[RMDB]
RNA sequence: GGGAACGACUCGAGUAGAGUCGAAAAGAUAUGGACCAAGAGGCUUGGACCGUACGGUCGGAAACGAUUACGCUAGCCUACUGGUCCUAAGUCAAAACAUUUACUUUCCUUCGGGAAAGUAAAUGAACUCCUAAGCAGUCUUCGGACUGCUUAGGAGAAAAGAAACAACAACAACAAC
Reactivity to 2A3 in 0.01 (KOAc 150mM, MgCl2 10mM, bicine 150mM(pH8.5), 24C), signal-to-noise 1, nucleotides 027 to 126: g020a020u050a020u160g000g000a010c020c020a070a030g030a000g070g020c070u140u160g070g090a190c080c110g030u090a080c220g140g030u010c020g020g000a120a100a020c020g000a020u060u110a010c030g000c040u020a010g000c000c000u050a110c010u090g000g000u000c010c010u010a040a010g080u040c010a070a000a090a070c000a000u030u010u000a000c000u020u000u000c010c000u000u010c300g050g000g020a000a000a000g010u020a000a010a000u000g000a010a000
Reactivity to DMS in 0.01 (KOAc 150mM, MgCl2 10mM, bicine 150mM(pH8.5), 24C), signal-to-noise 2, nucleotides 027 to 126: g000a010u010a300u010g010g010a000c000c020a020a080g030a090g000g000c020u010u000g050g000a100c240c020g000u010a040c300g020g040u010c010g010g010a120a140a130c000g030a060u000u010a050c010g000c030u000a070g000c000c000u000a020c050u000g000g000u000c010c000u010a000a100g010u010c030a100a040a130a250c000a010u000u010u000a000c000u000u010u010c000c000u000u030c210g000g010g000a010a000a000g000u000a000a000a000u000g010a080a120
Conditions: 150 mM KOAc, 10 mM MgCl2 and 150 mM bicine (pH 8.5), 24 C.
An RNA of 177 nucleotides, treated with 2A3 and DMS and read out base by base.
DMS adducts were read by reverse transcription with MarathonRT.
Source: RMDB library TTRDEL, as collected in RNAgym.
For DMS, 1,156 sequencing reads were counted.